[RMDB]
RNA sequence: GGGAACGACUCGAGUAGAGUCGAAAAUAUGGCUACACAAAAACCUUCAUAUAGGCAGGACGCAGUGGCCACACCUAUAAUCCCAGCCCUUUGGGAGGCUAAGACAGGUGGAUCACUUAAGCCCAGAAACAACCAAAUGAUUCGUCAUUUGGUUGUUAAAAGAAACAACAACAACAAC
Reactivity to DMS in 0.01 (KOAc 150mM, MgCl2 10mM, bicine 150mM(pH8.5), 24C), signal-to-noise 6, nucleotides 027 to 126: u020a090u010g010g010c010u000a040c030a140c130a060a080a120a160a060c000c020u000u000c190a140u010a110u030a020g010g020c090a060g010g010a130c140g020c090a080g040u000g010g010c030c010a030c040a030c020c020u000a060u000a110a130u000c010c010c010a070g000c050c010c050u000u000u000g020g000g030a050g000g000c040u010a070a060g000a070c140a030g010g020u010g000g010a100u000c090a030c090u010u000a070a110g020c010c000c020a120g010a120
Reactivity to 2A3 in 0.01 (KOAc 150mM, MgCl2 10mM, bicine 150mM(pH8.5), 24C), signal-to-noise 4, nucleotides 027 to 126: u170a060u030g000g000c010u040a030c050a000c030a070a090a020a080a050c020c000u030u080c140a130u210a050u140a290g060g050c040a000g020g030a020c060g030c130a030g000u010g020g010c010c000a020c010a010c010c020u060a060u040a140a060u040c000c010c000a010g000c020c010c000u120u110u050g070g030g010a090g030g000c020u050a080a000g060a040c050a070g040g000u010g000g030a060u110c000a020c070u080u080a080a030g020c000c010c000a030g090a030

Source: RMDB library OK2TRN, as collected in RNAgym. Chemical mapping of a 177-nucleotide RNA with DMS and 2A3.